[RMDB]
RNA sequence: GGGAACGACUCGAGUAGAGUCGAAAACUAAUGAGUAAGGAAAACAAAGCGAGCGGUGGGAGCCGCUCGCCGCGCUUCUAAGUAAUCAUGCGCAAUAAUUUGUGGAGGGGUAAUAGGCUGGCCGAGCCAUAUUCUUCGCUUUCGAGCGAAGAAUAUGAAAAGAAACAACAACAACAAC
Reactivity to DMS in 0.01 (KOAc 150mM, MgCl2 10mM, bicine 150mM(pH8.5), 24C), signal-to-noise 6, nucleotides 027 to 126: c050u020a100a080u010g000a070g010u020a090a140g000g010a050a050a100a130c040a040a300a100g010c000g000a010g000c000g000g040u000g020g040g010a260g010c020c000g000c000u000c000g020c010c020g000c300g010c130u000u000c060u010a050a140g010u020a050a060u010c060a010u010g020c060g000c070a060a080u020a050a080u020u010u010g010u010g000g000a050g000g000g010g010u000a040a080u030a040g000g000c020u000g000g010c050c050g000a070g010c060
Reactivity to 2A3 in 0.01 (KOAc 150mM, MgCl2 10mM, bicine 150mM(pH8.5), 24C), signal-to-noise 6, nucleotides 027 to 126: c040u080a100a110u140g060a020g120u090a100a070g070g040a080a100a020a010c050a040a090a010g000c000g000a010g010c000g000g010u030g040g110g010a030g030c000c000g000c000u000c000g000c000c000g010c000g020c000u080u040c020u110a140a150g080u100a120a110u090c060a070u140g010c010g010c020a010a070u180a120a080u120u080u100g070u070g010g030a050g010g010g010g000u030a050a080u060a090g040g000c030u020g030g000c000c030g010a010g000c010
The record gives the reactivity of an RNA of 177 nucleotides to DMS and 2A3.
Values cover nucleotides 27 to 126.